[RMDB]
RNA sequence: GGGAACGACUCGAGUAGAGUCGAAAACAGAAUACAUGAUGAUCUCAAUCCAACUUGAACUCUCUCACUGAUUACUUGAUGACAAUAAAAUAUCUGAUAUUCUGAAACCAAAUACUUCGGUAUUUGGGUUGCACUGAAGGUUCGCCUUCAGUGCAACAAAAGAAACAACAACAACAAC
Reactivity to 2A3 in 0.01 (KOAc 150mM, MgCl2 10mM, bicine 150mM(pH8.5), 24C), signal-to-noise 1, nucleotides 027 to 126: c020a020g000a090a000u020a010c100a030u220g020a000u040g090a080u080c000u000c010a030a050u060c040c060a020a050c030u030u150g030a080a010c000u030c010u000c000u000c030a140c110u040g020a160u090u160a080c020u100u020g020a050u060g030a040c010a010a050u140a090a170a110a090u210a010u050c000u000g110a070u020a090u000u060c030u040g110a210a010a010c000c020a000a000a000u000a000c010u000u000c090g140g050u000a020u010u020u000g030g020